[RMDB]
RNA sequence: GGGAACGACUCGAGUAGAGUCGAAAACAAGCGCGUCAGGUGCUCCGGAUGUUUGGAGCCGCUUCGCAAGCGGUGUCUGCACGUGCGAGGGCGGCCUCCUGUGCGGCCAUACUCUUGCAACCUGGCCUCUAGUGUUGCGGUUCGCUGCGACGCUAGAAAAAGAAACAACAACAACAAC
Reactivity to 2A3 in 0.01 (KOAc 150mM, MgCl2 10mM, bicine 150mM(pH8.5), 24C), signal-to-noise 9, nucleotides 027 to 126: c050a020a030g060c040g030c040g070u020c010a000g010g010u020g020c010u010c010c010g110g060a220u190g160u210u210u240g040g000a000g000c000c010g000c010u060u050c050g000c020a010a010g030c010g030g000u020g030u010c010u020g000c000a000c020g140u050g030c150g010a010g010g020g050c120g080g280c000c000u000c000c010u020g010u020g010c000g000g000c010c000a030u120a260c020u020c000u010u020g000c010a010a030c000c000u000g000g000c000c000
Reactivity to DMS in 0.01 (KOAc 150mM, MgCl2 10mM, bicine 150mM(pH8.5), 24C), signal-to-noise 9, nucleotides 027 to 126: c070a110a070g010c070g020c240g010u010c010a020g000g020u010g000c020u010c020c030g010g010a120u040g010u020u030u040g010g000a060g000c000c130g000c040u010u010c170g000c030a050a030g020c100g000g010u010g000u010c010u000g010c020a010c020g010u000g000c120g010a020g010g000g010c220g010g000c010c000u000c000c010u000g000u000g000c000g000g000c050c020a030u010a080c030u000c020u000u010g000c020a140a040c020c000u000g000g000c010c220

Conditions: 150 mM KOAc, 10 mM MgCl2 and 150 mM bicine (pH 8.5), 24 C. An RNA of 177 nucleotides, treated with 2A3 and DMS and read out base by base. Reactivities are given for positions 27 through 126. As a SHAPE reagent, 2A3 marks flexible, mostly unpaired nucleotides at the ribose 2'-OH.